[RMDB]
RNA sequence: GGGAACGACUCGAGUAGAGUCGAAAAACUGCAUCUACGGAUGCAGAACUACGUUCAUCCAAUUUAUUUGGACGCAUGAAACGAGAAUAGGGAACGGGAUUCUCAUACGCAGGCUACGGCCUGCGAAAAAACUCCUUAUGCUUCGGCAUAAGGAGAAGUUUUGAACUUACUUCGGUAAGUUCAAAACAAAAGAAACAACAACAACAAC
Reactivity to DMS in 0.01 (KOAc 150mM, MgCl2 10mM, bicine 150mM(pH8.5), 24C), signal-to-noise 1, nucleotides 027 to 156: a210c000u000g000c000a030u010c000u000a060c280g160g010a000u000g030c000a000g000a030a040c010u000a000c100g000u000u000c000a000u010c040c070a110a170u000u000u000a170u060u000u000g000g010a030c000g000c050a140u000g000a120a110a090c090g000a100g000a100a120u030a140g040g010g040a100a070c090g110g070g000a300u000u030c010u000c000a120u000a190c060g050c000a000g020g000c000u000a140c200g110g030c010c000u000g060c010g000a000a030a060a030a010a060c000u000c000c000u030u000a010u000g020c000u000u000c300g100g070c040a010u000a000a000g000g000a000g000a000a010
Reactivity to 2A3 in 0.01 (KOAc 150mM, MgCl2 10mM, bicine 150mM(pH8.5), 24C), signal-to-noise 2, nucleotides 027 to 156: a000c000u000g000c000a000u010c010u030a070c260g060g000a000u000g000c000a000g010a010a020c070u100a050c000g010u000u020c010a020u000c010c010a040a020u170u200u120a180u280u110u000g020g000a030c030g010c040a040u120g160a060a070a010c030g000a000g030a080a060u060a090g050g000g040a000a020c010g000g030g020a020u030u020c020u000c020a020u070a080c030g000c010a000g020g000c000u030a060c230g110g010c010c000u000g010c010g000a000a000a000a010a000a000c000u000c000c000u000u000a000u000g000c000u030u020c120g140g010c000a000u010a010a000g020g000a000g000a000a010
The record gives the reactivity of an RNA of 207 nucleotides to DMS and 2A3.
For 2A3 the reverse transcriptase was SuperScript II with manganese.
The DMS profile rests on 1,298 reads.
Conditions: 150 mM KOAc, 10 mM MgCl2 and 150 mM bicine (pH 8.5), 24 C.
It was measured as part of the RMDB library M2RFOK.
For DMS the reverse transcriptase was MarathonRT.